[RMDB]
RNA sequence: GGGAACGACUCGAGUAGAGUCGAAAAUUCCGGCAAUCUGGAGGCGUUCUGGACAGGGGUUCGAUUCCCCUCACCUCCACCCAAGGGCAUUCCGCUGAGUGUUUUUGGAUGGGGGUGUACUGGUCUCGUAGAUUAUGAAGUUCGCUUCAUAAUCUACAAAAGAAACAACAACAACAAC
Reactivity to DMS in 0.01 (KOAc 150mM, MgCl2 10mM, bicine 150mM(pH8.5), 24C), signal-to-noise 4, nucleotides 027 to 126: u010u010c090c000g010g030c030a080a150u000c030u010g010g000a040g010g000c040g020u000u010c020u000g010g020a090c150a030g020g010g010g010u000u000c050g000a300u000u000c010c010c000c010u000c010a000c010c000u000c000c000a020c020c000c000a010a000g000g000g010c000a010u000u000c020c140g010c240u020g010a020g020u000g010u000u000u000u010u000g000g000a010u000g000g010g000g000g000u000g010u010a020c290u000g010g000u000c060u010c180
Reactivity to 2A3 in 0.01 (KOAc 150mM, MgCl2 10mM, bicine 150mM(pH8.5), 24C), signal-to-noise 2, nucleotides 027 to 126: u120u060c110c010g020g050c030a010a080u030c010u120g160g000a010g000g010c010g010u030u040c020u030g010g110a040c060a040g010g000g000g030u020u040c000g010a030u030u030c010c000c000c010u010c000a000c000c000u000c000c000a000c020c000c000a010a000g020g000g000c000a010u010u020c050c100g110c300u280g010a010g000u010g030u000u000u000u000u000g020g000a000u000g020g010g000g000g010u000g000u000a000c010u020g060g060u020c030u000c130